This 207-nucleotide RNA was probed chemically with 2A3. The RNA was probed in 150 mM KOAc, 10 mM MgCl2 and 150 mM bicine (pH 8.5) at 24 C.
RNA sequence: GGGAACGACUCGAGUAGAGUCGAAAACGCAUGCGAGAGCAUGCGGCUAAGCUUCGGCUUAGUAAGAGCAACUUAGGAUUUUAGGCUCCCCGGCGUGUCUCGAACAAUGCCGGGCCAAACCCAUAGGGCUGGCGGUCCCUGUGCGGUCAUAAUUCAACGCUACGUAGUAUUUCGAUACUACGUAGCGAAAAGAAACAACAACAACAAC
Reactivity to 2A3 in 0.01 (KOAc 150mM, MgCl2 10mM, bicine 150mM(pH8.5), 24C), signal-to-noise 2, nucleotides 027 to 156: c010g000c000a000u000g000c000g000a020g000a010g040c000a000u000g010c000g010g010c000u000a000a000g000c010u060u120c230g090g000c000u000u030a000g000u000a040a020g010a020g020c070a020a130c040u090u110a100g070g000a050u100u110u030u040a050g070g000c010u000c000c000c000c020g000g000c000g000u010g000u000c060u100c290g080a070a030c020a070a070u160g010c000c000g000g000g000c000c000a020a010a000c010c010c000a000u030a010g030g000g000c040u020g060g060c010g070g040u110c000c000c010u000g000u000g010c100g000g020u050c050a090u060a110a040u070u070c040a040a080